[RMDB]
RNA sequence: GGGAACGACUCGAGUAGAGUCGAAAAUGGCACUAUGACCAUGACGUGCGAGGCUCAAUCAGGCUUGGACUUCAGCCAAUUGUAUUUGAUGACUCUGGACAAAAAACAUUGGUUGGUGAACAGGGAACCACUUUUAAAAUUUCGAUUUUAAAAGUGGAAAAGAAACAACAACAACAAC
Reactivity to DMS in 0.01 (KOAc 150mM, MgCl2 10mM, bicine 150mM(pH8.5), 24C), signal-to-noise 9, nucleotides 027 to 126: u000g010g020c010a070c120u010a110u010g010a090c030c030a050u010g010a110c150g010u010g010c040g010a080g010g010c040u000c050a060a070u010c090a100g010g000c030u000u000g010g000a170c050u000u000c030a030g010c010c020a030a040u000u010g020u000a090u000u000u000g000a180u000g000a070c050u000c100u010g020g010a130c060a000a040a060a060a050a040c050a060u010u010g000g010u000u000g000g010u000g000a060a140c050a040g000g000g010a090a210
Reactivity to 2A3 in 0.01 (KOAc 150mM, MgCl2 10mM, bicine 150mM(pH8.5), 24C), signal-to-noise 4, nucleotides 027 to 126: u030g040g010c030a010c060u140a090u140g040a080c020c020a050u030g040a020c040g010u040g010c030g020a020g030g000c010u000c050a040a070u050c050a090g080g050c020u040u040g030g020a050c030u070u050c060a010g000c020c000a010a010u090u100g030u030a160u040u050u090g120a120u090g040a030c020u000c120u230g060g040a030c040a010a090a010a000a010a000c020a020u020u020g020g000u010u010g020g020u030g010a040a010c020a040g010g000g050a010a030
The record gives the reactivity of an RNA of 177 nucleotides to DMS and 2A3. The RNA was probed in 150 mM KOAc, 10 mM MgCl2 and 150 mM bicine (pH 8.5) at 24 C. For 2A3 the reverse transcriptase was SuperScript II with manganese. For DMS, 14,474 sequencing reads were counted. DMS adducts were read by reverse transcription with MarathonRT. Source: RMDB library OK2TST, as collected in RNAgym.